The record gives the reactivity of an RNA of 177 nucleotides to DMS and 2A3. For DMS the reverse transcriptase was MarathonRT. For 2A3, 2,534 sequencing reads were counted. Reactivities are given for positions 27 through 126.

[RMDB]
RNA sequence: GGGAACGACUCGAGUAGAGUCGAAAAUCUGUGAGGGGUCACGGUUGUCGUGGGCGUCGUUGCCAUUAGAUGAACGUUAGACUAUGGUUUUACUUUGAUAGUUUAUCAAAGAUUUUGGGCGAGCGAGCUAUAUUUAUUAUUUCGAUAAUAAAUAUAGAAAAGAAACAACAACAACAAC
Reactivity to DMS in 0.01 (KOAc 150mM, MgCl2 10mM, bicine 150mM(pH8.5), 24C), signal-to-noise 4, nucleotides 027 to 126: u030c030u010g020u030g000a060g010g010g000g020u000c020a060c060g010g020u010u010g000u010c040g020u010g000g010g010c050g020u000c070g010u000u020g030c000c010a100u030u020a060g000a080u010g000a040a070c070g020u010u020a080g010a050c050u010a050u010g000g000u010u010u010u020a070c020u000u000u000g000a010u000a070g010u020u030u010a030u000c000a020a020a020g010a230u000u010u020u010g010g000g010c040g010a080g020c040g020a080g000
Reactivity to 2A3 in 0.01 (KOAc 150mM, MgCl2 10mM, bicine 150mM(pH8.5), 24C), signal-to-noise 4, nucleotides 027 to 126: u050c030u050g050u070g050a010g030g070g010g010u030c030a010c030g020g040u040u070g040u050c040g030u070g020g000g040c010g040u070c040g040u070u090g040c000c010a060u060u120a050g060a100u100g060a050a030c050g010u060u080a050g030a050c010u020a070u080g040g000u000u030u070u150a030c020u000u000u000g020a010u030a080g230u130u190u180a030u000c000a010a000a010g010a020u070u030u090u120g020g010g020c030g000a020g010c020g010a010g000